About this RNA: Structure probing data (2A3 and DMS) for a 177-nucleotide construct. Conditions: 150 mM KOAc, 10 mM MgCl2 and 150 mM bicine (pH 8.5), 24 C.

[RMDB]
RNA sequence: GGGAACGACUCGAGUAGAGUCGAAAAAUUUCCAGGUCCAGAGGGAAUCUUGGGAAGCUCCAUGGUAGCUGUUAAUAGUAUAGGCCCUGUGGACACAAACUUUGCUAGUUUGAGAAAUCCAUCAAUGGAUAUACGCUCAUUUCGAUGAGCGUAUAUCAAAAGAAACAACAACAACAAC
Reactivity to 2A3 in 0.01 (KOAc 150mM, MgCl2 10mM, bicine 150mM(pH8.5), 24C), signal-to-noise 3, nucleotides 027 to 126: a000u050u020u010c020c010a030g000g110u020c000c010a020g000a020g170g000g000a070a120u160c040u060u100g080g030g090a060a030g000c020u010c030c020a130u100g100g060u130a010g000c020u010g040u170u170a140a080u080a240g160u110a090u050a200g050g050c010c010c000u080g080u000g170g000a000c000a000c000a000a040a030c050u100u130u130g060c030u070a040g030u020u020u040g060a090g040a020a050a040u020c030c000a040u060c030a060a060u110g070
Reactivity to DMS in 0.01 (KOAc 150mM, MgCl2 10mM, bicine 150mM(pH8.5), 24C), signal-to-noise 5, nucleotides 027 to 126: a190u010u000u000c000c030a180g010g010u010c000c000a030g000a010g010g000g000a090a060u010c020u000u000g010g010g000a130a040g020c030u000c050c140a100u000g010g010u000a080g000c010u000g010u010u000a170a130u000a090g010u010a110u010a050g020g000c010c010c010u010g010u000g000g010a010c030a210c090a030a030a040c070u010u010u010g010c160u010a070g000u000u000u000g000a150g010a050a060a080u010c040c040a040u000c130a070a110u000g000